[RMDB]
RNA sequence: GGGAACGACUCGAGUAGAGUCGAAAAGAUAUGGAUCCAUAGACAUGGCUGAAGAUUCGGAAACGAAUCGUAGGCCAACAGCUAUGGAGUCCUAAGUCAAAGGCUUGUUACUUCGGUAACAAGCCAACAGUUCAACUAACUUCGGUUAGUUGAACUGAAAAGAAACAACAACAACAAC
Reactivity to DMS in 0.01 (KOAc 150mM, MgCl2 10mM, bicine 150mM(pH8.5), 24C), signal-to-noise 5, nucleotides 027 to 126: g000a020u000a160u020g000g010a300u000c000c000a000u000a000g010a020c020a300u010g020g020c000u010g000a180a190g000a010u000u000c000g010g000a020a020a070c000g010a010a000u000c000g010u030a240g010g020c010c000a020a030c160a080g000c000u010a000u010g000g000a020g000u010c000c000u000a030a100g010u000c020a090a100a120g010g000c000u000u000g010u000u000a010c000u000u030c230g030g000u000a000a000c010a000a000g020c010c000a010a040
Reactivity to 2A3 in 0.01 (KOAc 150mM, MgCl2 10mM, bicine 150mM(pH8.5), 24C), signal-to-noise 2, nucleotides 027 to 126: g010a010u060a020u070g000g000a000u000c000c000a000u010a010g020a030c110a170u300g000g000c020u040g070a230a040g010a100u000u000c000g000g020a100a050a020c020g010a000a050u010c020g000u020a050g010g010c010c000a000a000c010a000g000c010u010a010u000g000g020a000g040u040c000c010u020a040a020g020u000c040a070a060a130g000g000c000u000u010g000u010u000a010c020u030u100c230g100g000u000a000a000c000a010a000g000c010c000a000a000